Conditions: 150 mM KOAc, 10 mM MgCl2 and 150 mM bicine (pH 8.5), 24 C. Structure probing data (2A3 and DMS) for a 177-nucleotide construct. 2A3 adducts were read by reverse transcription with SuperScript II with manganese. For DMS, 2,701 sequencing reads were counted.
RNA sequence: GGGAACGACUCGAGUAGAGUCGAAAAAACUCUAGACUUAAUCGAUCAUACUCAAGAGGAGGUAAUCCAAUGAACACUAGUCUUAAACUCAGCAAACAACUCAGUUUUGGAGAGGAGAUUGCUAAUACACGACUAUAAAGUUCGCUUUAUAGUCGUGAAAAGAAACAACAACAACAAC
Reactivity to 2A3 in 0.01 (KOAc 150mM, MgCl2 10mM, bicine 150mM(pH8.5), 24C), signal-to-noise 4, nucleotides 027 to 126: a000a010c160u160c070u090a070g060a080c030u070u090a040a020u110c030g020a010u020c030a040u040a090c020u020c050a060a050g040a070g170g020a020g070g010u080a030a050u000c010c030a020a080u110g080a120a010c060a040c100u050a040g080u020c000u040u050a050a040a030c050u020c080a010g010c020a010a050a150c010a020a020c060u010c050a090g030u030u120u210u220g160g030a150g000a000g020g020a040g010a020u040u060g010c010u000a000a000u060a060
Reactivity to DMS in 0.01 (KOAc 150mM, MgCl2 10mM, bicine 150mM(pH8.5), 24C), signal-to-noise 4, nucleotides 027 to 126: a080a040c070u000c040u000a110g010a120c090u010u010a110a120u000c050g000a030u000c120a070u000a100c050u010c070a100a090g020a130g000g010a050g000g000u020a070a080u000c020c030a120a060u000g010a040a040c110a080c120u000a090g010u000c020u000u000a020a050a080c090u000c080a030g000c030a030a040a080c110a060a200c050u000c060a030g010u010u000u010u000g000g000a120g000a030g000g010a210g000a070u000u000g020c020u000a030a120u010a190